[RMDB]
RNA sequence: GGGAACGACUCGAGUAGAGUCGAAAAGGGGUCUAAUUGUCAGUGGCAACUAUCCUUGGAUUUAUACCUGAAGCCUCCACGGGUAUUGUCAGGAUUCUUGCCACUUGGAUUUAUUAGACGGAGGCACCCAAAACUACGAAGCUUCGGCUUCGUAGAACUCACUUACACACUUCGGUGUGUAAGUGAGAAAAGAAACAACAACAACAAC
Reactivity to 2A3 in 0.01 (KOAc 150mM, MgCl2 10mM, bicine 150mM(pH8.5), 24C), signal-to-noise 2, nucleotides 027 to 156: g010g020g010g000u010c000u000a030a000u000u030g030u020c030a030g010u000g000g010c020a010a030c020u040a000u030c050c000u110u170g080g020a080u300u300u100a020u070a020c000c000u030g090a120a030g080c020c030u080c030c020a030c020g010g010g000u010a010u000u020g030u010c070a050g010g010a000u030u000c000u010u020g000c000c000a000c000u010u030g010g000a000u100u170u090a010u040u000a020g000a000c060g010g030a030g010g000c020a060c000c010c020a050a070a040a030c000u020a000c000g000a000a000g000c000u050u110c300g090g000c000u010u000c000g040u000a000g000a000a000
The record gives the reactivity of an RNA of 207 nucleotides to 2A3. It was measured as part of the RMDB library RNAMAK. Conditions: 150 mM KOAc, 10 mM MgCl2 and 150 mM bicine (pH 8.5), 24 C. For 2A3 the reverse transcriptase was SuperScript II with manganese.